An RNA of 207 nucleotides, treated with 2A3 and read out base by base.

RNA sequence: GGGAACGACUCGAGUAGAGUCGAAAAAGCCAUAACAUUACGAUGGUAUGGCAAGUCCGUGACGGCGAUGGAUCCCGCCUGGCCGAUGCCGAACUGCCGAUCUGGCUGAUGGUUCCUGCCCCGUCAAAAAACGUAAAGCACUUCGGUGCUUUACGAAUCAAACACCAAGCUUCGGCUUGGUGUUUGAAAAAGAAACAACAACAACAAC
Reactivity to 2A3 in 0.01 (KOAc 150mM, MgCl2 10mM, bicine 150mM(pH8.5), 24C), signal-to-noise 1, nucleotides 027 to 156: a020g000c010c000a010u010a030a000c000a010u010u120a010c200g110a030u010g000g020u050a000u000g020g030c040a020a000g060u000c000c000g020u010g000a010c020g020g000c140g070a030u020g000g000a020u050c000c010c000g040c020c080u020g010g040c000c070g030a020u110g090c080c020g150a240a150c150u110g060c020c040g050a080u050c060u070g000g030c030u040g040a210u100g030g000u000u010c000c010u010g030c000c000c000c000g000u000c000a000a000a000a000a080a050c010g000u000a000a000a000g000c000a010c010u010u120c290g040g000u000g000c000u000u000u000a000c000g000a000a030
The 2A3 profile rests on 925 reads. 2A3 adducts were read by reverse transcription with SuperScript II with manganese. The RNA was probed in 150 mM KOAc, 10 mM MgCl2 and 150 mM bicine (pH 8.5) at 24 C. Reactivities are given for positions 27 through 156. The data come from the RNA Mapping Database (RMDB), library M2RFPK.